This 177-nucleotide RNA was probed chemically with 2A3 and DMS. For 2A3 the reverse transcriptase was SuperScript II with manganese. High DMS reactivity at an A or C suggests that its Watson-Crick edge is free. The 2A3 profile rests on 15,010 reads.
RNA sequence: GGGAACGACUCGAGUAGAGUCGAAAACCUCCUCACCACGCGGCCUGGGUCUGAGGGUAACAUGGCCCUGCGGGAGAGAGCCAACACGGGGGGGCCCCGGUCCGGCUAACAGGGCAGGAGGUCGGCCGCUUUCUAAAAAUUUCGAUUUUUAGAAAGCAAAAGAAACAACAACAACAAC
Reactivity to 2A3 in 0.01 (KOAc 150mM, MgCl2 10mM, bicine 150mM(pH8.5), 24C), signal-to-noise 9, nucleotides 027 to 126: c000c000u000c000c000u010c020a120c010c000a070c050g060c070g010g010c010c020u140g020g010g030u050c050u070g070a190g040g040g010u040a080a060c050a130u160g110g020c010c000c010u080g050c080g040g090g000a070g010a010g010a010g090c010c010a080a040c080a070c120g010g000g000g010g010g050g020c000c000c000c000g000g010u040c010c020g020g000c010u040a090a040c020a110g010g010g000c010a010g000g020a010g000g010u000c000g030g020c000c020
Reactivity to DMS in 0.01 (KOAc 150mM, MgCl2 10mM, bicine 150mM(pH8.5), 24C), signal-to-noise 4, nucleotides 027 to 126: c010c010u000c010c020u000c150a170c000c020a080c150g000c220g000g010c000c020u050g010g000g030u010c050u030g000a100g010g000g040u010a120a070c130a160u020g010g010c010c030c030u010g000c070g020g010g010a120g010a090g020a080g000c010c020a070a110c080a100c080g000g000g000g000g030g000g020c030c020c020c000g000g030u020c050c050g000g000c010u000a100a300c190a070g000g000g010c300a050g000g000a080g010g030u010c050g010g010c110c060